[RMDB]
RNA sequence: GGGAACGACUCGAGUAGAGUCGAAAAGCACAAGUCAAUUCAUUAAGAACCUACCUAAAGCAGAUAUUCAUGUGCAUCUUCCGGGGACGAUUUCACCGCGAACAGCUUGGGAGUUAGGAGUAAGAAAUCGUUCCUUUUAGUUCGCUAAAAGGAACGAAAAAGAAACAACAACAACAAC
Reactivity to 2A3 in 0.01 (KOAc 150mM, MgCl2 10mM, bicine 150mM(pH8.5), 24C), signal-to-noise 2, nucleotides 027 to 126: g020c010a010c010a040a010g090u030c040a100a110u120u050c030a030u090u200a090a020g050a090a050c000c010u080a040c040c030u070a100a040a010g000c040a010g050a050u040a060u110u150c080a010u230g040u030g040c020a050u040c030u070u030c000c020g020g010g000g040a040c070g000a000u090u050u000c040a050c040c010g060c010g050a090a010c010a050g080c010u050u080g040g020g000a060g010u070u040a050g020g090a020g050u170a030a080g030a080a120a050
Reactivity to DMS in 0.01 (KOAc 150mM, MgCl2 10mM, bicine 150mM(pH8.5), 24C), signal-to-noise 4, nucleotides 027 to 126: g010c000a030c030a060a100g010u010c110a090a090u010u000c060a110u010u010a070a100g010a060a060c090c040u010a080c050c040u000a050a070a100g000c100a050g010a090u010a060u000u000c080a080u000g010u000g000c020a100u000c050u010u000c050c030g010g000g010g000a060c220g010a070u010u000u010c030a050c080c060g030c040g010a060a090c100a090g000c040u000u000g010g010g010a130g020u000u010a060g010g010a130g020u010a060a110g000a030a080a070